[RMDB]
RNA sequence: GGGAACGACUCGAGUAGAGUCGAAAACUGGAUCACUUUGUGUAGCAGCUAGGUGAAACUGGAAUGUGUAGAGUAGCUGAAUUUUAAGGUGUUCAGAAAUAUCUGAAAUUAGAGAAGCUAAUUAUAGAUAGGUGGUAGGAGUAGUACCAUAUUAAAAGAUAUGGCAGGAGUUCGCUCCUGCCAUAUCAAAAGAAACAACAACAACAAC
Reactivity to 2A3 in 0.01 (KOAc 150mM, MgCl2 10mM, bicine 150mM(pH8.5), 24C), signal-to-noise 2, nucleotides 027 to 156: c010u020g030g020a020u040c020a010c060u070u050u050g010u040g020u080a040g030c030a000g000c000u040a030g000g080u070g010a070a040a040c030u060g020g070a140a090u090g050u020g010u090a040g020a040g110u050a010g060c010u010g020a040a060u070u080u100u090a090a040g000g010u000g040u020u000c010a010g040a040a130a010u100a030u040c020u020g030a110a000a020u030u030a020g020a030g020a120a010g060c010u020a010a030u080u030a040u040a070g030a080u040a030g010g070u040g000g020u020a030g020g020a020g000u050a000g020u040a030c000c040a010u050a070u170u160a040a070a050a020
Reactivity to DMS in 0.01 (KOAc 150mM, MgCl2 10mM, bicine 150mM(pH8.5), 24C), signal-to-noise 1, nucleotides 027 to 156: c020u020g010g020a200u010c030a120c070u000u010u000g040u000g000u000a180g030c080a190g000c040u000a030g020g010u000g010a110a090a100c030u010g010g000a070a140u010g000u010g000u000a100g020a170g000u000a070g010c010u000g010a040a080u000u000u010u020a080a100g020g040u010g040u010u000c000a240g020a110a060a090u000a040u000c000u000g010a080a070a040u000u000a060g010a220g010a090a100g010c020u000a020a060u000u010a220u010a050g010a080u000a040g070g030u000g010g050u000a010g000g000a100g030u000a030g040u000a100c030c010a000u000a090u000u000a070a070a070a210
The record gives the reactivity of an RNA of 207 nucleotides to 2A3 and DMS. For DMS the reverse transcriptase was MarathonRT. The reactions ran in a buffer of 150 mM KOAc, 10 mM MgCl2 and 150 mM bicine (pH 8.5), at 24 C.